Annotation
Source: RMDB library OK2TST, as collected in RNAgym. Structure probing data (DMS and 2A3) for a 177-nucleotide construct. For DMS, 1,516 sequencing reads were counted. The RNA was probed in 150 mM KOAc, 10 mM MgCl2 and 150 mM bicine (pH 8.5) at 24 C. For 2A3, 1,232 sequencing reads were counted.
RNA sequence: GGGAACGACUCGAGUAGAGUCGAAAAUUAAUAACUCCACGUAGACAAUUUUUCCUCUGGAGGACAGAACUGCUACUUCUUCAAAGCUUUUGGGGCUCCCAGAUGCUGCAUAGUGGGGGUGCCUAACAUCCUUGACAUAGUUCGCUAUGUCAAGGAUAAAAGAAACAACAACAACAAC
Reactivity to DMS in 0.01 (KOAc 150mM, MgCl2 10mM, bicine 150mM(pH8.5), 24C), signal-to-noise 2, nucleotides 027 to 126: u020u000a080a120u000a080a130c020u000c010c030a030c070g000u010a090g010a130c050a030a040u000u000u000u000u010c010c010u000c140u000g020g030a070g030g010a070c180a040g000a030a060c070u000g000c020u000a030c020u000u000c050u010u000c090a050a110a100g010c070u000u000u010u000g010g010g010g030c110u000c030c000c020a040g010a090u000g010c030u000g020c050a050u000a110g000u010g010g000g000g000g010u000g030c010c080u010a060a050c240
Reactivity to 2A3 in 0.01 (KOAc 150mM, MgCl2 10mM, bicine 150mM(pH8.5), 24C), signal-to-noise 2, nucleotides 027 to 126: u090u010a040a110u060a110a030c010u000c030c010a050c080g080u050a050g080a130c020a120a090u080u020u040u120u080c010c000u070c090u170g150g100a040g000g000a000c010a030g110a040a060c030u060g020c020u050a050c010u060u030c010u090u110c040a100a100a100g050c050u010u050u090u100g020g030g060g000c050u050c010c000c000a020g020a140u050g020c060u080g000c030a100u090a200g100u020g000g030g000g000g030u040g160c000c000u020a030a010c030